[RMDB]
RNA sequence: GGGAACGACUCGAGUAGAGUCGAAAAGAUAUGGAGCAGACCCAGCGCAAUGAGAGCGAAGAACUCGGAAACGAGGGAGCUCUUGACGCUGCUGCUCCUAAGUCAAAGCGAUAGUUCGCUAUCGCAACCCGAGUAGAUUGUUCGCAAUCUACUCGGGAAAAGAAACAACAACAACAAC
Reactivity to DMS in 0.01 (KOAc 150mM, MgCl2 10mM, bicine 150mM(pH8.5), 24C), signal-to-noise 1, nucleotides 027 to 126: g030a030u000a300u000g000g010a030g000c000a060g000a210c280c260c090a010g000c000g010c050a050a080u000g010a040g010a010g000c010g000a060a090g040a100a150c000u000c010g000g000a070a070a200c000g010a010g000g040g010a110g000c010u000c000u000u010g030a030c010g000c000u000g000c000u000g010c000u000c000c010u010a000a010g010u010c040a030a120a150g060c000g000a010u000a000g010u010u010c190g010c000u000a000u000c010g010c000a120a100
Reactivity to 2A3 in 0.01 (KOAc 150mM, MgCl2 10mM, bicine 150mM(pH8.5), 24C), signal-to-noise 1, nucleotides 027 to 126: g030a010u120a060u180g010g020a020g000c000a000g030a270c150c110c080a020g000c020g070c040a050a120u300g010a020g010a000g050c000g040a300a110g050a140a060c000u010c000g000g000a080a090a010c000g000a000g000g000g000a030g000c000u060c000u010u040g010a010c010g050c000u030g000c030u000g000c000u010c000c000u020a050a000g020u000c000a090a090a040g000c000g020a000u020a040g000u110u100c300g040c200u000a010u000c000g000c000a010a070
Source information:
Conditions: 150 mM KOAc, 10 mM MgCl2 and 150 mM bicine (pH 8.5), 24 C. The record gives the reactivity of an RNA of 177 nucleotides to DMS and 2A3. For 2A3, 1,953 sequencing reads were counted. Source: RMDB library TTRDEL, as collected in RNAgym. For 2A3 the reverse transcriptase was SuperScript II with manganese.